[RMDB]
RNA sequence: GGGAACGACUCGAGUAGAGUCGAAAAAACAUCCAUAAAGAUGAUUUCAUGAAGCAGGUUUGCUGGCAUGCAAUUUGUGACAAUGUGCAGCAUCUGGAGACAGGGCAGAAAAAGCUUCAUUGUGGAAACAGAUAACAAUUAUGUAAGCAACUGGCAGGGCGUGAUGUAUAUUCGUAUACAUCACGCCAAAAGAAACAACAACAACAAC
Reactivity to 2A3 in 0.01 (KOAc 150mM, MgCl2 10mM, bicine 150mM(pH8.5), 24C), signal-to-noise 1, nucleotides 027 to 156: a000a000c030a030u030c010c000a160u300a020a110a030g010a000u020g000a000u000u000u100c070a070u130g030a040a010g030c000a010g190g000u140u170u120g020c000u000g090g090c010a000u030g030c040a060a120u000u080u100g120u110g030a010c040a090a000u000g040u090g060c070a020g020c000a020u030c010u030g020g000a020g000a020c050a040g040g060g090c030a060g020a070a170a000a050a050g000c010u060u140c000a040u100u030g010u000g110g020a110a050a000c040a070g020a020u040a060a030c010a010a000u240u020a050u160g040u030a000a020g000c010a000a000c020u060g140g000c060a070g230